[RMDB]
Structure probing data (2A3 and DMS) for a 177-nucleotide construct. 2A3 adducts were read by reverse transcription with SuperScript II with manganese. The data come from the RNA Mapping Database (RMDB), library OK2TRN. The RNA was probed in 150 mM KOAc, 10 mM MgCl2 and 150 mM bicine (pH 8.5) at 24 C. Values cover nucleotides 27 to 126. DMS adducts were read by reverse transcription with MarathonRT.
RNA sequence: GGGAACGACUCGAGUAGAGUCGAAAACUCCUCGCAGUAUGGCCUGGACCCCUCCGGCAAUCUAAAAAGCAGGACAAUGAGGUAUAACAUGUACGGGACUAUUGAAGAGAUACCACUACAUCAAGUGCCAUUAAUACCACUUCGGUGGUAUUAAUGGAAAAGAAACAACAACAACAAC
Reactivity to 2A3 in 0.01 (KOAc 150mM, MgCl2 10mM, bicine 150mM(pH8.5), 24C), signal-to-noise 4, nucleotides 027 to 126: c020u010c000c010u000c020g010c010a000g010u130a070u130g050g030c010c010u020g050g040a080c020c010c030c000u020c010c020g030g030c040a030a050u060c030u230a100a040a060a050a010g050c030a010g000g020a020c030a030a120u120g020a030g040g060u070a090u050a120a050c060a060u080g030u080a020c010g000g000g030a020c040u020a050u140u100g060a130a050g030a010g000a070u050a080c020c040a030c040u080a030c010a090u100c040a050a050g040u010g130
Reactivity to DMS in 0.01 (KOAc 150mM, MgCl2 10mM, bicine 150mM(pH8.5), 24C), signal-to-noise 6, nucleotides 027 to 126: c110u000c010c020u000c100g000c070a090g020u020a080u010g010g010c000c020u000g010g000a160c060c030c020c040u000c020c020g030g020c060a050a060u000c080u030a050a070a070a120a070g020c040a040g000g010a070c100a050a100u000g000a050g010g010u000a050u000a060a090c110a050u000g010u010a020c140g010g000g000a080c080u000a060u010u000g020a110a070g010a110g000a080u000a060c040c010a060c090u000a050c100a060u000c100a060a080g020u000g000